[RMDB]
RNA sequence: GGGAACGACUCGAGUAGAGUCGAAAAGAUAUGGAUUCGUGUACAGGAGCAACAGCUGGGAUCGGAAACGAUCCCAGACAUGCUCCGUACCGAAUCCUAAGUCAAAUCAAGCAGUUCGCUGCUUGAAGAUUUAGCUCAUGUUCGCAUGAGCUAAAUCAAAAGAAACAACAACAACAAC
Reactivity to DMS in 0.01 (KOAc 150mM, MgCl2 10mM, bicine 150mM(pH8.5), 24C), signal-to-noise 4, nucleotides 027 to 126: g010a060u000a300u000g000g000a020u000u000c000g020u010g010u000a000c000a200g080g000a020g010c010a040a090c250a170g000c000u010g000g000g010a010u000c010g020g000a130a110a220c010g010a010u000c000c000c000a000g000a010c090a120u000g000c000u000c010c000g000u000a020c010c000g000a010a000u000c000c000u000a030a090g000u010c030a100a110a210u000c000a010a000g000c000a010g000u000u010c250g010c010u000g020c000u020u000g000a010a130
Reactivity to 2A3 in 0.01 (KOAc 150mM, MgCl2 10mM, bicine 150mM(pH8.5), 24C), signal-to-noise 3, nucleotides 027 to 126: g030a040u070a070u190g040g020a000u000u020c040g000u060g020u300a130c270a300g030g000a000g000c020a020a190c060a210g050c030u000g000g000g000a000u020c020g040g050a060a100a040c000g000a000u000c000c010c000a000g000a000c000a010u000g000c010u000c000c000g000u000a000c000c000g000a000a010u010c000c000u000a030a000g030u000c050a040a000a220u050c010a010a000g000c000a000g020u070u170c300g050c210u010g010c010u000u010g010a040a020